[RMDB]
RNA sequence: GGGAACGACUCGAGUAGAGUCGAAAAGAAGACGUGACGAAAAGUCACGUCAAUACAGAGACUACGCAACUCUGAAAAACACAACAAAAGUGUACAAGCGUAGCAGGAUCGAGAGAUCCUGAAAAGAAUAAAUGGCUCAUUUCGAUGAGCCAUUUAUAAAAGAAACAACAACAACAAC
Reactivity to DMS in 0.01 (KOAc 150mM, MgCl2 10mM, bicine 150mM(pH8.5), 24C), signal-to-noise 4, nucleotides 027 to 126: g010a190a140g000a000c010g000u020g020a010c010g010a070a090a090a200g000u000c010a000c000g020u000c000a010a020u040a240c030a010g020a010g010a070c000u000a010c000g000c010a150a070c010u000c000u000g000a050a110a060a150a020c020a000c010a110a100c250a130a120a140a080g010u000g000u010a040c170a070a060g010c000g020u000a000g000c000a000g010g000a010u000c000g000a160g010a110g000a010u000c000c000u000g020a030a020a090a090g000a170
Reactivity to 2A3 in 0.01 (KOAc 150mM, MgCl2 10mM, bicine 150mM(pH8.5), 24C), signal-to-noise 3, nucleotides 027 to 126: g150a070a000g000a020c000g000u000g000a000c020g090a090a140a070a290g010u000c010a000c000g000u000c000a000a000u100a000c000a000g000a000g000a000c010u000a000c000g010c020a130a020c000u000c000u020g100a080a010a010a000a000c030a020c030a200a040c020a060a130a060a050g010u020g020u040a070c060a080a000g020c000g000u000a000g000c000a000g000g000a000u000c000g000a000g000a000g000a140u000c000c000u000g000a010a000a000a000g070a010
An RNA of 177 nucleotides, treated with DMS and 2A3 and read out base by base. DMS adducts were read by reverse transcription with MarathonRT. Values cover nucleotides 27 to 126. For 2A3, 3,568 sequencing reads were counted. The RNA was probed in 150 mM KOAc, 10 mM MgCl2 and 150 mM bicine (pH 8.5) at 24 C. Source: RMDB library OK1LIB, as collected in RNAgym.